[RMDB]
RNA sequence: GGGAACGACUCGAGUAGAGUCGAAAAGCGGUUCGCGGAGGCGAUGGCACCGUUCGGAUUCGAUGCCGGCGCCGUGUUGCCCUCCUACGGGCUCGCCGAGUCGACGUGCGCGGUGACCGUGCCGGUCAGCCGGAAUCCAGUUCGCUGGAUUCCGGCUAAAAGAAACAACAACAACAAC
Reactivity to DMS in 0.01 (KOAc 150mM, MgCl2 10mM, bicine 150mM(pH8.5), 24C), signal-to-noise 2, nucleotides 027 to 126: g060c050g000g000u010u000c040g000c300g010g050a130g030g000c020g010a070u020g010g000c000a000c010c010g010u010u010c080g020g030a160u010u000c070g000a020u010g010c200c030g020g010c010g010c140c040g000u010g000u010u010g000c100c020c010u000c080c060u000a090c120g010g000g020c010u010c020g030c020c010g010a300g030u000c040g010a030c090g010u010g010c060g020c090g000g020u000g020a100c040c030g020u010g000c000c020g000g000u010c080
Reactivity to 2A3 in 0.01 (KOAc 150mM, MgCl2 10mM, bicine 150mM(pH8.5), 24C), signal-to-noise 1, nucleotides 027 to 126: g030c010g110g150u160u090c010g000c050g030g020a030g030g000c090g110a040u110g010g000c050a010c000c060g100u210u190c000g070g080a300u180u190c030g040a010u300g050c070c020g010g060c030g010c000c000g040u050g020u010u100g030c030c000c000u020c030c000u030a030c090g000g080g000c040u060c030g000c040c020g010a020g010u020c010g040a040c070g020u160g010c030g000c060g010g000u040g060a230c020c090g000u030g120c000c000g000g000u050c100

Chemical mapping of a 177-nucleotide RNA with DMS and 2A3. For DMS, 1,400 sequencing reads were counted. For 2A3, 924 sequencing reads were counted.